[RMDB]
RNA sequence: GGGAACGACUCGAGUAGAGUCGAAAAGAAAGAAAGAAAGGUGUAAGGAAGGGAUCCAGUUUCAGCUUUCUACAUAUGGCUAGCCAGUUUUCCCAGCACCAUUUAUUAAAUAGGGAAUCCUUUCCAAAAUAAAUGGUCCUUUCGAGGACCAUUUAUUAAAAGAAACAACAACAACAAC
Reactivity to DMS in 0.01 (KOAc 150mM, MgCl2 10mM, bicine 150mM(pH8.5), 24C), signal-to-noise 4, nucleotides 027 to 126: g000a090a080a050g000a080a030a030g020a030a070a030g000g010u010g010u010a100a080g000g010a030a010g010g000g000a050u000c020c000a110g010u000u010u010c030a150g000c010u000u010u000c000u040a080c120a050u010a050u000g000g000c100u020a060g010c030c020a060g000u010u000u010u000c000c010c000a190g000c030a060c020c010a040u020u030u020a080u070u040a080a060a100u050a100g000g000g020a090a050u010c000c000u000u000u010c000c000a130a080
Reactivity to 2A3 in 0.01 (KOAc 150mM, MgCl2 10mM, bicine 150mM(pH8.5), 24C), signal-to-noise 3, nucleotides 027 to 126: g090a010a020a000g110a030a110a030g090a010a000a000g040g000u080g030u130a090a050g000g020a010a000g000g000g000a010u010c020c010a010g010u010u090u140c050a050g030c000u000u080u020c060u070a070c050a080u220a020u050g060g000c050u060a020g010c000c020a020g010u040u010u030u060c000c000c000a000g030c000a000c000c000a050u110u170u230a120u050u300a040a060a180u190a050g000g020g130a030a030u010c010c000u010u000u000c010c000a000a080
This 177-nucleotide RNA was probed chemically with DMS and 2A3. The data come from the RNA Mapping Database (RMDB), library OK1LIB. For DMS the reverse transcriptase was MarathonRT.